[RMDB]
RNA sequence: GGGAACGACUCGAGUAGAGUCGAAAAAGUUUUGCCUGUUAGGUGAGGCUCCUAUGCAAACACAGGCCACUGCCCAAAAAUGUCCAAAGACGCCAAUGGGUAGAACAGGGAUUGUCGGAUUACGGCUAAAACAGCCCAUGCUUCGGCAUGGGCUGAAGUACAAAAGUGAGUUCGCUCACUUUUGUACAAAAGAAACAACAACAACAAC
Reactivity to 2A3 in 0.01 (KOAc 150mM, MgCl2 10mM, bicine 150mM(pH8.5), 24C), signal-to-noise 1, nucleotides 027 to 156: a000g030u040u020u110u040g030c010c000u050g070u120u140a090g000g040u100g050a060g010g000c020u110c030c000u160a130u130g070c060a040a080a070c020a020c000a120g000g020c000c020a020c000u000g000c020c000c000a050a000a000a000a000u000g000u010c020c030a170a080a140g000a000c000g000c030c000a010a040u000g000g000g000u010a010g030a080a040c060a020g050g070g030a130u040u150g010u030c000g000g000a040u110u110a090c030g000g020c000u040a030a050a030a030c000a000g000c000c000c000a000u000g010c020u030u050c200g030g000c020a000u010g040g000g080c000u000g000a000a000
Reactivity to DMS in 0.01 (KOAc 150mM, MgCl2 10mM, bicine 150mM(pH8.5), 24C), signal-to-noise 1, nucleotides 027 to 156: a170g000u000u010u000u000g010c000c030u010g000u000u010a120g050g010u010g030a090g030g030c010u010c050c040u010a080u010g020c070a210a070a060c070a060c050a100g010g030c010c030a050c060u010g000c010c020c010a010a070a080a110a040u020g030u010c020c020a100a160a160g000a080c040g000c050c070a030a210u000g010g020g000u000a030g000a130a090c060a130g030g030g000a140u010u010g010u010c020g020g000a160u010u010a050c080g040g000c040u010a050a060a060a150c030a060g000c010c010c000a010u000g000c000u000u010c300g060g000c010a000u000g020g000g000c000u010g010a000a080